[RMDB]
This 177-nucleotide RNA was probed chemically with 2A3.
The RNA was probed in 150 mM KOAc, 10 mM MgCl2 and 150 mM bicine (pH 8.5) at 24 C.
2A3 adducts were read by reverse transcription with SuperScript II with manganese.
RNA sequence: GGGAACGACUCGAGUAGAGUCGAAAACAUAUAUAUUCACCUGUAUGCAUCUGUAUUGAGGUUUACUUUUUGCACUGCAUUUUGCCUCUUCGGUGUGGAUGUGUGGGAACUCGCUUGAAGAAGAGGGGCUACUACGGCCUUUCGAGGCCGUAGUAGCAAAAGAAACAACAACAACAAC
Reactivity to 2A3 in 0.01 (KOAc 150mM, MgCl2 10mM, bicine 150mM(pH8.5), 24C), signal-to-noise 2, nucleotides 027 to 126: c040a000u140a000u060a020u000a110u100u170c080a240c080c000u070g050u190a030u100g010c000a100u030c060u080g080u040a080u000u140g000a080g160g000u130u110u140a140c030u040u140u120u090u050g070c050a040c110u060g040c050a050u040u070u010u230g100c020c000u000c000u000u000c000g040g040u040g030u040g100g070a090u200g100u000g110u050g010g190g040a110a090c010u040c060g060c050u040u100g040a140a170g020a010a000g010a100g000g000g020